[RMDB]
RNA sequence: GGGAACGACUCGAGUAGAGUCGAAAAUCAUCAACCGCACCCGCACAAACCCCACCCCCGUGGGGGAGGUUAUCCACGCCCACGACGCCCUGGCGAUCCAAUACGAACAGGGGCUUGGCCUGCUGGCUCGUCUGGCGCAGUUCGCUGCGCCAGACGAAAAAGAAACAACAACAACAAC
Reactivity to 2A3 in 0.01 (KOAc 150mM, MgCl2 10mM, bicine 150mM(pH8.5), 24C), signal-to-noise 1, nucleotides 027 to 126: u100c010a010u010c060a040a000c000c020g040c020a030c000c010c000g070c080a040c010a150a090a080c090c000c030c000a010c060c130c000c000c000g000u030g000g000g000g050g000a090g030g000u130u020a010u100c080c000a050c010g060c000c000c000a030c070g000a000c040g030c010c000c000u050g050g000c000g000a000u060c070c070a120a020u180a270c030g000a070a000c100a010g060g000g050g000c110u120u190g000g000c000c000u130g070c010u000g140g000c040